[RMDB]
RNA sequence: GGGAACGACUCGAGUAGAGUCGAAAAGCUCUGCGAGACAGAUGGAACAACAAAGAGAGAUCGAAAAUCUUAGAGGAGAGAACGAAUCUGUCGACUUCACUAGGACAUUGUCGAUCAGAGGUCCAAAGACCAUUGUAGGGUUCGCCUUACGAUGGUCAAAAGAAACAACAACAACAAC
Reactivity to 2A3 in 0.01 (KOAc 150mM, MgCl2 10mM, bicine 150mM(pH8.5), 24C), signal-to-noise 9, nucleotides 027 to 126: g020c000u000c010u010g030c030g030a030g010a030c010a010g100a050u040g000g040a090a050c040a030a020c020a020a270a010g090a020g010a000g010a030u030c030g050a040a040a020a060u010c020u030u040a030g010a050g080g030a020g010a010g020a070a040c030g020a050a120u120c100u130g100u050c030g060a120c010u030u030c010a020c050u030a010g000g030a010c020a100u060u100g060u030c010g000a010u030c010a000g030a010g050g040u000c010c010a040a030a020
Reactivity to DMS in 0.01 (KOAc 150mM, MgCl2 10mM, bicine 150mM(pH8.5), 24C), signal-to-noise 9, nucleotides 027 to 126: g010c020u000c000u010g000c040g000a160g000a060c030a050g010a050u000g000g020a110a090c120a090a090c190a060a120a080g020a090g010a210g000a030u000c020g000a030a060a100a170u000c010u010u000a020g000a070g000g000a020g000a090g000a130a040c030g010a090a110u040c120u040g010u000c010g000a300c010u000u000c010a100c020u000a020g000g010a040c130a070u020u010g000u000c010g000a100u010c020a040g000a060g000g000u000c020c030a060a090a090